[RMDB]
Background: The record gives the reactivity of an RNA of 207 nucleotides to 2A3 and DMS. High 2A3 reactivity points to a flexible backbone, as in loops and unpaired stretches. The DMS profile rests on 4,399 reads. Values cover nucleotides 27 to 156. It was measured as part of the RMDB library OK3TST.

RNA sequence: GGGAACGACUCGAGUAGAGUCGAAAAAGAGUUGCAGCACAUUGCAGCACAAGGCAGCAAGAGAGGCAGCAGCGCGCUUGCUUCAGCUUUUUUGCUUGCCAAGGCUUAGUUAGGCAGUUGCUUGCCAGCUUGCUUAGUUCAUUUUAGAGGCAGAGAGACCUUAGUAGGGUUUCGACCCUACUAAGGUAAAAGAAACAACAACAACAAC
Reactivity to 2A3 in 0.01 (KOAc 150mM, MgCl2 10mM, bicine 150mM(pH8.5), 24C), signal-to-noise 3, nucleotides 027 to 156: a000g070a000g000u020u030g030c000a010g050c030a050c030a160u080u090g000c020a010g000c010a040c020a130a010g040g000c040a010g010c010a030a000g050a030g020a070g060g020c020a000g000c000a020g000c050g020c030g010c100u080u080g000c000u060u040c040a040g020c050u130u030u040u050u080u090g040c040u100u170g000c000c010a020a020g020g000c010u030u050a010g020u120u190a040g020g000c020a010g010u040u040g030c020u030u110g000c020c010a010g020c020u000u030g000c000u040u070a020g000u060u060c010a060u060u000u090u120a050g020a030g050g000c060a010g030a000g000a010g020
Reactivity to DMS in 0.01 (KOAc 150mM, MgCl2 10mM, bicine 150mM(pH8.5), 24C), signal-to-noise 2, nucleotides 027 to 156: a070g020a160g010u020u020g030c010a100g000c070a140c080a130u000u020g010c040a070g050c010a150c070a090a200g010g020c050a080g000c010a030a030g010a070g010a110g020g020c070a060g010c050a070g020c050g020c090g020c060u000u000g000c010u010u010c110a110g010c010u000u000u000u000u000u010g010c030u000u000g000c040c030a070a110g010g030c050u010u000a060g050u000u000a070g020g040c010a100g020u000u000g010c010u000u010g040c000c030a100g010c020u000u010g010c030u010u000a050g010u000u010c040a140u010u010u000u000a090g040a120g000g020c030a090g010a230g000a170g010

The RNA was probed in 150 mM KOAc, 10 mM MgCl2 and 150 mM bicine (pH 8.5) at 24 C. For 2A3 the reverse transcriptase was SuperScript II with manganese.